[RMDB]
RNA sequence: GGGAACGACUCGAGUAGAGUCGAAAAACGCUACGACUACGGUCGUAGCGAAUUGGCAGGUGCCAUGUUGCCUGCUCCUUACUGUACACGUGGCUGGCAAGGAGACGGGAACAUGGAGCCGCCAUAAAAAUGUCCACGUAUUCGUACGUGGACAUUUAAAAGAAACAACAACAACAAC
Reactivity to DMS in 0.01 (KOAc 150mM, MgCl2 10mM, bicine 150mM(pH8.5), 24C), signal-to-noise 2, nucleotides 027 to 126: a150c000g020c000u000a010c000g000a010c010u000a070c210g030g000u000c000g000u000a010g010c010g000a010a010u020u020g010g000c000a080g050g020u020g000c000c000a000u010g000u000u000g020c000c000u000g000c010u000c000c000u000u000a040c020u000g020u030a080c050a220c280g020u050g010g020c020u000g000g010c060a010a020g000g000a000g000a100c030g000g000g010a010a010c000a000u000g000g000a130g000c010c000g000c000c000a010u000a010a050
Reactivity to 2A3 in 0.01 (KOAc 150mM, MgCl2 10mM, bicine 150mM(pH8.5), 24C), signal-to-noise 6, nucleotides 027 to 126: a000c010g000c000u000a000c010g020a010c010u040a020c240g110g010u010c000g010u000a000g000c000g000a000a030u040u010g060g000c130a150g010g000u030g050c000c000a000u000g060u000u030g300c000c000u010g000c000u000c000c000u020u010a030c010u020g050u120a120c090a050c230g210u250g110g000c040u030g010g010c070a010a010g010g020a020g020a100c030g000g000g000a000a000c000a000u000g000g000a000g000c000c000g000c000c000a000u110a010a140

This 177-nucleotide RNA was probed chemically with DMS and 2A3. Reactivities are rounded to 0.1 and cut off at 0 and 3. It was measured as part of the RMDB libraries RFM100 and RFMREP.